[RMDB]
RNA sequence: GGGAACGACUCGAGUAGAGUCGAAAAUUGACAGGACCCUACAUACGGCAUGCACACAGGAGUCGAGGGUUGUGUGUUAACUGGGUGCGUUCUGAGCGGGAUACGGCGAUUUGAACAUUGAGACGAAGAUGAUAACGAAAUUCGUUUCGUUAUCAUCAAAAGAAACAACAACAACAAC
Reactivity to 2A3 in 0.01 (KOAc 150mM, MgCl2 10mM, bicine 150mM(pH8.5), 24C), signal-to-noise 9, nucleotides 027 to 126: u070u060g050a030c030a030g070g030a060c010c010c000u030a050c040a080u160a040c030g030g010c040a050u080g020c020a010c010a000c000a030g040g050a060g120u120c050g050a060g040g060g000u030u020g010u000g000u000g000u050u080a080a030c040u050g020g020g010u060g050c040g000u040u050c030u050g030a020g020c030g010g040g010a040u040a120c030g030g000c010g020a040u040u040u140g030a040a020c040a110u060u140g070a050g020a060c070g020a090a030
Reactivity to DMS in 0.01 (KOAc 150mM, MgCl2 10mM, bicine 150mM(pH8.5), 24C), signal-to-noise 7, nucleotides 027 to 126: u030u020g000a100c080a070g010g000a110c020c010c010u010a110c100a090u020a110c080g010g000c070a060u000g020c030a040c050a070c070a060g010g010a150g010u000c050g010a100g010g000g000u000u000g010u010g010u020g020u010u010a050a130c090u000g000g010g020u010g000c030g010u010u010c030u000g000a120g030c070g000g000g010a060u010a040c100g000g010c050g010a080u010u010u010g000a060a070c160a120u010u000g000a080g010a150c050g000a110a090
The data come from the RNA Mapping Database (RMDB), library OK1LIB. The record gives the reactivity of an RNA of 177 nucleotides to 2A3 and DMS. Values are in units of 0.01, from 0 to 300, in steps of 10. For DMS, 20,910 sequencing reads were counted. For 2A3, 14,655 sequencing reads were counted.